An RNA of 177 nucleotides, treated with DMS and 2A3 and read out base by base. For 2A3 the reverse transcriptase was SuperScript II with manganese. For DMS, 13,188 sequencing reads were counted. The data come from the RNA Mapping Database (RMDB), library OK1LIB.
[RMDB]
RNA sequence: GGGAACGACUCGAGUAGAGUCGAAAAAGGGACCGCAGCCAGCGCAUACAAUCGCGCUCCCGUCCGUUUGUCCCGGGCAGUACCACGCCGUACUGGUAUUCGUACCGGCUGAGCAGGGUCUCCAGGGCGUAAGGAUGAGGUUCGCCUCAUCCUUACGAAAAGAAACAACAACAACAAC
Reactivity to DMS in 0.01 (KOAc 150mM, MgCl2 10mM, bicine 150mM(pH8.5), 24C), signal-to-noise 5, nucleotides 027 to 126: a060g020g010g000a030c020c100g050c080a090g020c050c060a050g010c020g010c030a110u030a090c300a110a090u040c160g000c030g000c050u000c020c020c150g000u010c030c030g010u020u010u010g000u010c020c010c010g010g010g010c140a040g010u030a020c010c010a050c070g010c000c030g010u030a080c020u020g000g010u000a030u010u030c120g010u000a040c020c030g000g010c090u010g010a100g010c050a100g010g000g000u010c000u000c010c010a060g000g000g010
Reactivity to 2A3 in 0.01 (KOAc 150mM, MgCl2 10mM, bicine 150mM(pH8.5), 24C), signal-to-noise 5, nucleotides 027 to 126: a020g060g010g000a050c040c040g060c040a020g040c040c000a050g000c020g030c020a030u140a200c060a130a230u130c090g000c000g000c020u020c010c000c010g040u040c010c030g040u040u090u120g060u030c000c000c000g000g000g000c080a020g010u050a040c000c010a080c110g030c050c020g050u080a090c020u050g040g000u030a070u030u090c090g020u020a110c000c010g030g010c020u050g020a040g030c050a070g030g070g000u020c010u020c000c010a030g010g020g000